[RMDB]
Annotation:
Structure probing data (2A3) for a 207-nucleotide construct. 2A3 adducts were read by reverse transcription with SuperScript II with manganese. Conditions: 150 mM KOAc, 10 mM MgCl2 and 150 mM bicine (pH 8.5), 24 C.

RNA sequence: GGGAACGACUCGAGUAGAGUCGAAAAGUACACGAGUUCGAUCGAACACGUGAGAGAGUGUUCGUUCGAUCGAUCGAGAACGAACUCUCGUACGUUCUCGUACUCACACUCACGAGAUCGUUCUCACGAGUACUCGUGAACGUGAGAGUGAUCGUGACGGACGUUACUGGUUCGCCAGUAACGUCCGAAAAGAAACAACAACAACAAC
Reactivity to 2A3 in 0.01 (KOAc 150mM, MgCl2 10mM, bicine 150mM(pH8.5), 24C), signal-to-noise 2, nucleotides 027 to 156: g080u050a000c010a010c070g010a030g040u030u000c000g020a000u010c010g000a010a000c000a010c030g070u190g040a070g020a000g010a000g040u030g000u050u010c020g010u030u030c010g000a000u030c000g010a100u050c030g010a000g000a000a000c010g000a090a040c010u050c000u030c220g050u060a010c030g010u040u010c010u000c000g000u040a030c000u010c010a020c000a010c010u010c000a000c000g000a000g010a040u010c010g010u140u070c030u050c100a010c010g000a000g060u140a210c000u010c000g010u000g000a030a000c060g020u010g020a030g000a010g040u060g050a020u040c000g020u000g040a020